[RMDB]
RNA sequence: GGGAACGACUCGAGUAGAGUCGAAAAUGGUGUUAAGUGGAAUAAGUGGAAAAAUAUACAUAUAUGUACAGGGGGCUACAUAUAUGUAUAUGCCCCCUUGUGUCAGUAUAAGUAGGUAUAAGGUGGACAGUGCCAUAAUCUUCGGAUUAUGGCACUGAAAAGAAACAACAACAACAAC
Reactivity to DMS in 0.01 (KOAc 150mM, MgCl2 10mM, bicine 150mM(pH8.5), 24C), signal-to-noise 1, nucleotides 027 to 126: u030g020g020u020g000u030u030a030a150g050u000g000g000a040a060u020a090a070g000u000g010g000a020a060a050a060a070u000a040u020a000c010a050u000a010u000a010u000g000u000a030c070a110g020g010g000g000g000c120u000a010c020a050u000a000u030a040u030g010u000a000u000a010u000g000c060c020c000c030c010u000u020g000u020g000u000c020a070g010u000a240u040a050a160g010u000a040g000g020u000a050u000a140a000g000g000u020g000g000a250